[RMDB]
RNA sequence: GGGAACGACUCGAGUAGAGUCGAAAAGAAACCCGCUGAAGUGAAACAUCUCAGUAAGCGGAGGAAAAGAAAGAGAAAUCGAUUCCGUAAGUAGUGGCGAGCGAAAGCGGAUGGAGCCCAAACCGAACUUUUAGUAUGUGUUCGCACAUACUAAAAGAAAAGAAACAACAACAACAAC
Reactivity to DMS in 0.01 (KOAc 150mM, MgCl2 10mM, bicine 150mM(pH8.5), 24C), signal-to-noise 6, nucleotides 027 to 126: g010a090a150a190c070c000c010g010c010u010g000a160a230g030u010g000a110a200a180c180a090u030c030u000c040a060g000u010a160a050g010c000g010g000a100g010g010a060a050a100a090g000a040a090a080g000a070g010a070a080a110u010c040g000a140u020u010c000c000g010u000a030a050g000u000a090g000u010g000g040c200g000a250g010c010g000a060a160a300g000c010g000g000a030u000g010g030a070g000c010c010c000a030a060a090c140c110g000a080a160
Reactivity to 2A3 in 0.01 (KOAc 150mM, MgCl2 10mM, bicine 150mM(pH8.5), 24C), signal-to-noise 7, nucleotides 027 to 126: g050a040a030a010c000c000c000g000c010u050g020a160a210g120u040g100a080a170a070c070a220u130c030u010c040a010g030u040a030a020g000c010g010g030a100g070g030a040a080a030a020g120a030a070a010g160a030g060a040a080a040u080c020g010a040u070u010c000c000g000u020a010a000g000u010a010g000u020g090g190c220g050a050g000c010g010a040a000a000g010c000g010g000a000u030g000g010a020g010c000c010c000a030a050a030c050c030g050a030a070